[RMDB]
RNA sequence: GGGAACGACUCGAGUAGAGUCGAAAAUGCCAGGUUGUGAUGGCGGUAGUUUGUAUGUUAACAAGCACGCUUUUCAUACACCAGCAUAUGAUGUGAGUGCAUUCCGUGAUCUGAAACCUUUACCAUUCCCUUCCCUACACUUCGGUGUAGGGAAGGGAAAAGAAACAACAACAACAAC
Reactivity to 2A3 in 0.01 (KOAc 150mM, MgCl2 10mM, bicine 150mM(pH8.5), 24C), signal-to-noise 1, nucleotides 027 to 126: u030g020c020c010a020g060g000u000u000g020u020g020a030u000g000g000c000g050g010u090a080g020u100u010u000g050u050a190u100g300u170u260a130a000c000a010a010g010c050a020c020g000c000u300u270u050u000c000a040u030a000c010a010c020c020a000g010c020a000u020a140u110g040a030u120g030u100g150a120g090u040g000c030a060u120u000c000c030g000u030g010a080u020c030u040g040a040a020a010c060c060u030u100u050a060c020c010a040u000u030
This 177-nucleotide RNA was probed chemically with 2A3. The reactions ran in a buffer of 150 mM KOAc, 10 mM MgCl2 and 150 mM bicine (pH 8.5), at 24 C. Reactivities are rounded to 0.1 and cut off at 0 and 3. For 2A3, 589 sequencing reads were counted. For 2A3 the reverse transcriptase was SuperScript II with manganese.